[RMDB]
RNA sequence: GGGAACGACUCGAGUAGAGUCGAAAAAUAUAUCGUUUGCCUUAUACCCAAUACUUACCGCUGGCGCUGCUUUGUCAUUAGCCAAACACGGUAGUGAAGCAUUAAAGCAACGUUAUCUAACUAAACUCUAUAGUGGCCAAUGGUCGGCGUCAAUGUGGGACGUACUUAGAUUCGUCUAAGUACGUCCAAAAGAAACAACAACAACAAC
Reactivity to DMS in 0.01 (KOAc 150mM, MgCl2 10mM, bicine 150mM(pH8.5), 24C), signal-to-noise 1, nucleotides 027 to 156: a130u010a070u000a050u020c010g000u010u000u000g020c000c030u010u000a090u000a090c030c000c050a100a210u010a070c130u000u010a110c040c010g040c020u000g010g010c020g100c000u020g020c090u050u000u030g020u010c080a100u010u000a120g020c040c010a110a100a080c080a040c110g020g020u000a060g040u000g000a130a200g020c000a060u000u030a040a080a060g000c020a040a120c120g050u000u000a020u000c060u000a050a140c060u000a150a160a080c050u010c040u000a050u000a110g020u000g000g020c050c020a080a080u010g050g070u000c010g000g000c040g040u010c020a030a110u000g020u010g000
Reactivity to 2A3 in 0.01 (KOAc 150mM, MgCl2 10mM, bicine 150mM(pH8.5), 24C), signal-to-noise 3, nucleotides 027 to 156: a000u140a000u050a040u090c050g040u040u060u120g070c020c020u150u070a080u050a070c030c030c000a050a100u180a100c080u090u090a040c030c010g020c040u010g010g000c020g010c020u000g010c030u200u130u140g020u130c020a020u030u150a030g010c000c000a020a100a030c110a000c070g010g010u030a030g010u020g020a050a020g000c040a040u110u200a190a050a010g000c040a050a030c010g010u030u020a050u040c050u030a030a060c010u010a060a150a100c120u150c030u100a110u100a240g070u040g040g000c000c020a040a050u070g020g020u070c010g020g000c010g030u020c040a080a080u170g010u140g130
The record gives the reactivity of an RNA of 207 nucleotides to DMS and 2A3. Reactivities are given for positions 27 through 156. The DMS profile rests on 1,790 reads. Reactivities are rounded to 0.1 and cut off at 0 and 3. For 2A3 the reverse transcriptase was SuperScript II with manganese. For DMS the reverse transcriptase was MarathonRT.